[RMDB]
RNA sequence: GGGAACGACUCGAGUAGAGUCGAAAACGUGUCCGUCGGCGUACCCGACAACAUGCCCAGGUAGCCCAGACCUUCAAGGCUACGGUGCGUUGCGACGCACGGUCUGAUUCUUCACAACGACGUUCACAAGAUCGGAUCACUUUCGAGUGAUCCGAAAUAUCAGUGAUGGGUUCGCCCAUCACUGAUAAAAAGAAACAACAACAACAAC
Reactivity to DMS in 0.01 (KOAc 150mM, MgCl2 10mM, bicine 150mM(pH8.5), 24C), signal-to-noise 1, nucleotides 027 to 156: c090g020u000g050u010c030c080g030u010c010g030g040c040g020u000a090c190c000c000g040a040c040a100a050c070a050u030g000c000c060c010a080g020g040u010a030g010c010c000c190a130g040a090c060c040u010u010c040a110a300g030g010c000u000a030c000g020g040u010g010c050g000u000u000g020c150g000a160c010g020c000a040c020g000g000u000c010u010g010a220u000u000c020u050u000c080a160c040a120a110c040g040a100c010g000u030u050c050a040c010a130a150g010a230u000c020g000g060a020u000c000a030c020u000u000u020c300g030a040g010u010g050a020u030c020c000g010a020a000a040
Reactivity to 2A3 in 0.01 (KOAc 150mM, MgCl2 10mM, bicine 150mM(pH8.5), 24C), signal-to-noise 3, nucleotides 027 to 156: c050g000u010g000u040c100c170g010u000c020g000g000c080g050u110a180c010c020c000g000a010c040a010a000c000a020u130g000c000c000c010a010g030g000u000a000g010c000c030c140a010g010a010c000c000u010u000c010a000a010g000g000c000u000a000c010g020g000u010g000c010g010u020u100g080c230g050a010c010g010c010a010c000g010g000u010c010u000g030a030u110u090c110u130u160c110a050c090a240a080c080g160a030c070g020u060u120c110a060c040a150a090g040a150u050c000g000g000a000u010c000a000c010u060u060u090c170g120a000g010u000g000a000u000c000c000g000a000a000a000
The record gives the reactivity of an RNA of 207 nucleotides to DMS and 2A3. Conditions: 150 mM KOAc, 10 mM MgCl2 and 150 mM bicine (pH 8.5), 24 C. For DMS, 1,955 sequencing reads were counted. 2A3 is a SHAPE reagent: it acylates the 2'-hydroxyl of flexible nucleotides of all four kinds. 2A3 adducts were read by reverse transcription with SuperScript II with manganese.